[RMDB]
RNA sequence: GGGAACGACUCGAGUAGAGUCGAAAAUGAUUAUACGCACGAAGAACGUAUGUUUUGGGCUAUGCAGUACGCGGCUGGAGAGUUUAGUAAAGCCGACACGGGCGAGAAAGAUUUGACCGAUUAUCGGAUUGCUGUUGAUGAAACAGUCUCGGCGGCGCGCAAUAUCAUUGUUCGCAAUGAUAUUGCGAAAAGAAACAACAACAACAAC
Reactivity to 2A3 in 0.01 (KOAc 150mM, MgCl2 10mM, bicine 150mM(pH8.5), 24C), signal-to-noise 4, nucleotides 027 to 156: u050g010a010u050u150a050u070a070c080g010c020a100c170g110a070a060g050a140a020c020g020u030a030u100g070u000u060u060u090g060g020g000c030u040a050u120g010c030a010g040u040a060c080g030c020g080g000c030u020g010g010a040g010a000g000u070u060u080a030g010u060a000a070a040g020c010c000g000a020c020a020c070g020g030g010c030g010a030g070a050a120a010g060a100u070u050u170g050a040c020c000g040a070u130u080a080u180c030g020g030a060u030u080g000c010u000g010u080u010g020a090u080g010a030a040a010c030a020g050u030c000u000c020g030g020c030g020g010c050g000
Reactivity to DMS in 0.01 (KOAc 150mM, MgCl2 10mM, bicine 150mM(pH8.5), 24C), signal-to-noise 2, nucleotides 027 to 156: u000g020a120u000u000a110u010a030c020g020c010a060c030g020a170a220g000a190a030c020g020u010a020u010g020u000u000u000u000g040g000g050c090u000a080u000g050c080a110g030u010a070c040g020c040g040g020c040u010g020g020a090g010a110g010u010u000u000a130g020u000a070a100a160g050c000c000g000a010c040a060c020g000g000g020c000g020a080g000a110a080a140g000a200u000u010u000g030a040c010c000g030a120u000u000a070u010c050g050g020a080u000u000g000c010u000g010u010u020g000a130u000g020a210a060a060c070a100g010u000c030u010c070g020g000c060g030g010c080g030
Structure probing data (2A3 and DMS) for a 207-nucleotide construct. For 2A3 the reverse transcriptase was SuperScript II with manganese. The reactions ran in a buffer of 150 mM KOAc, 10 mM MgCl2 and 150 mM bicine (pH 8.5), at 24 C. For DMS the reverse transcriptase was MarathonRT.